[RMDB]
RNA sequence: GGGAACGACUCGAGUAGAGUCGAAAAUCGUAACGGCUGGGUGUAACCCAACUCUAGGUGUGCUGAUUAGCGGGCUUGACUCCGUAACAAAUAGGCACUGGUGGUAAAAAGCAUCCCACCUACUCACAAAGCUCCAAAUUCUUCGGAAUUUGGAGAAGCAUAAUUGCAGCUUCGGCUGCAAUUAUGCAAAAGAAACAACAACAACAAC
Reactivity to 2A3 in 0.01 (KOAc 150mM, MgCl2 10mM, bicine 150mM(pH8.5), 24C), signal-to-noise 1, nucleotides 027 to 156: u060c020g010u020a040a090c060g020g000c090u020g010g000g030u090g050u070a170a200c030c070c040a020a040c050u070c010u100a070g220g040u050g000u010g090c030u050g050a130u070u040a030g020c000g020g010g020c060u130u150g050a140c010u000c070c000g000u020a010a000c010a040a110a060u120a060g000g000c010a030c020u010g040g000u000g010g040u060a080a080a000a000a030g080c020a050u090c020c000c000a000c000c030u060a070c020u030c110a180c070a000a090a100g060c000u000c000c000a000a000a010u000u010c010u020u050c060g070g000a010a030u000u000u000g000g000a000g000a000a000